[RMDB]
Chemical mapping of a 177-nucleotide RNA with 2A3. 2A3 adducts were read by reverse transcription with SuperScript II with manganese. Reactivities are rounded to 0.1 and cut off at 0 and 3. High 2A3 reactivity points to a flexible backbone, as in loops and unpaired stretches. The 2A3 profile rests on 515 reads.
RNA sequence: GGGAACGACUCGAGUAGAGUCGAAAAAACAACAUCGUUCGUUUCUCCCGUCAAGCCGCCCCCGUGGCUGCCUGACACUCUUAACGGAGACGGGGUGAGGUCAGCCUUGUCACCCAAAUGACCCAUGCGCGCCAUGCUAUUUCGAUAGCAUGGCGCGAAAAGAAACAACAACAACAAC
Reactivity to 2A3 in 0.01 (KOAc 150mM, MgCl2 10mM, bicine 150mM(pH8.5), 24C), signal-to-noise 1, nucleotides 027 to 126: a000a000c100a020a000c010a090u040c040g010u060u000c040g000u030u040u030c000u030c010c010c030g070u010c030a000a000g030c010c020g000c020c000c000c050c130g020u130g010g000c050u000g000c010c000u020g060a030c000a060c000u240c040u050u220a140a060c040g060g000a070g000a070c000g040g000g000g000u000g100a010g000g070u050c060a000g010c000c020u000u000g070u070c020a070c100c000c000a000a100a090u070g000a010c000c010c010a040u240g020